[RMDB]
Source: RMDB library M2PK90, as collected in RNAgym. An RNA of 177 nucleotides, treated with DMS and read out base by base. DMS (dimethyl sulfate) methylates the pairing face of unpaired adenines and cytosines. The reactions ran in a buffer of 150 mM KOAc, 10 mM MgCl2 and 150 mM bicine (pH 8.5), at 24 C. DMS adducts were read by reverse transcription with MarathonRT.
RNA sequence: GGGAACGACUCGAGUAGAGUCGAAAAUGAGAAGUCGUCAGUAGUUCGACGUGAGCAGAAGCCCCCCUCGAUAUGCUAUGUGGACGAGGGCAUGCCCAAGACACACCUUAACCCUAGCGGGACGCAAUACCGAGCAGAUAUUCGUAUCUGCUCGGUAAAAAGAAACAACAACAACAAC
Reactivity to DMS in 0.01 (KOAc 150mM, MgCl2 10mM, bicine 150mM(pH8.5), 24C), signal-to-noise 1, nucleotides 027 to 126: u000g000a120g050a080a100g000u040c030g000u010c030a100g010u000a120g010u010u000c020g000a030c050g040u020g040a090g000c040a010g030a210a240g020c000c030c050c010c030c000u000c050g000a160u010a060u000g010c030u010a030u010g020u000g020g000a060c150g010a060g010g000g000c090a030u010g000c000c030c120a080a070g010a090c070a060c060a080c050c040u000u000a120a130c000c000c000u020a070g000c140g000g000g000a020c040g000c210a070a070